[RMDB]
RNA sequence: GGGAACGACUCGAGUAGAGUCGAAAAACGGUUAUACACUUCUAGCCAAUCAUUAUCUUGGAUAUCGUGUUUUUCAGCAUCUUCAUUUGAUAUCCAAACCGUUGGACCACCUCUAAAUAGUGUCAACCUUCUCCCGAAAUUUCGAUUUCGGGAGAAGAAAAGAAACAACAACAACAAC
Reactivity to DMS in 0.01 (KOAc 150mM, MgCl2 10mM, bicine 150mM(pH8.5), 24C), signal-to-noise 1, nucleotides 027 to 126: a010c050g000g030u000u010a150u000a090c030a030c050u000u000c050u010a130g030c010c040a120a050u020c090a060u000u000a090u000c090u000u010g010g010a000u010a030u000c030g030u000g010u000u000u000u000u030c060a160g030c090a040u000c090u010u010c070a040u000u000u050g020a010u000a010u000c050c000a070a030a120c120c070g000u010u000g010g000a180c080c050a110c130c060u010c100u020a060a110a050u010a050g050u010g000u000c120a090a070c070
Reactivity to 2A3 in 0.01 (KOAc 150mM, MgCl2 10mM, bicine 150mM(pH8.5), 24C), signal-to-noise 2, nucleotides 027 to 126: a000c020g010g030u160u050a090u060a080c040a040c070u170u080c030u060a070g090c050c000a060a060u080c040a140u070u250a130u100c080u020u050g010g000a000u010a000u010c010g040u060g090u060u020u000u050u110c090a070g040c040a070u020c070u090u020c020a140u130u040u290g000a010u010a000u060c000c000a000a000a030c020c030g010u000u030g020g010a030c010c010a050c040c000u070c030u100a100a080a050u120a080g030u000g010u030c000a050a040c030
An RNA of 177 nucleotides, treated with DMS and 2A3 and read out base by base. The reactions ran in a buffer of 150 mM KOAc, 10 mM MgCl2 and 150 mM bicine (pH 8.5), at 24 C. For DMS the reverse transcriptase was MarathonRT.